An RNA of 177 nucleotides, treated with DMS and 2A3 and read out base by base. The RNA was probed in 150 mM KOAc, 10 mM MgCl2 and 150 mM bicine (pH 8.5) at 24 C.

RNA sequence: GGGAACGACUCGAGUAGAGUCGAAAAUUUGCUUUCCGCGAGGUAAGGGGAGGGAAGGAAAAGCACUUUGUUGCCAACCGAAGAAGCCUUCCUUCAUAGACUGGAGUGCAUUGUGGGUGUGCGGCACAGCCGGUAAUUAAUUCGUUAAUUACCGGCUAAAAGAAACAACAACAACAAC
Reactivity to DMS in 0.01 (KOAc 150mM, MgCl2 10mM, bicine 150mM(pH8.5), 24C), signal-to-noise 9, nucleotides 027 to 126: u000u010u010g010c070u000u000u000c030c020g020c110g010a100g000g010u010a070a090g000g010g000g000a060g010g000g010a070a070g010g000a020a040a100a150g000c040a060c030u010u010u010g010u010u000g010c030c060a070a180c130c030g000a060a080g010a120a110g010c010c040u000u000c010c000u000u000c040a090u000a100g010a090c080u000g000g000a080g020u000g010c040a080u010u010g010u000g000g000g010u000g010u000g020c060g000g000c150a070c220
Reactivity to 2A3 in 0.01 (KOAc 150mM, MgCl2 10mM, bicine 150mM(pH8.5), 24C), signal-to-noise 6, nucleotides 027 to 126: u050u040u120g020c010u030u050u020c010c010g020c060g030a040g040g060u140a090a050g020g000g010g010a040g020g020g020a020a030g010g000a020a100a000a000g010c000a010c050u150u190u180g140u180u040g050c030c030a040a030c030c040g020a090a030g060a070a020g040c000c000u020u010c010c000u000u030c020a070u050a040g060a060c060u050g020g020a040g030u060g000c020a050u060u080g020u050g030g020g010u050g040u060g040c040g000g000c030a010c020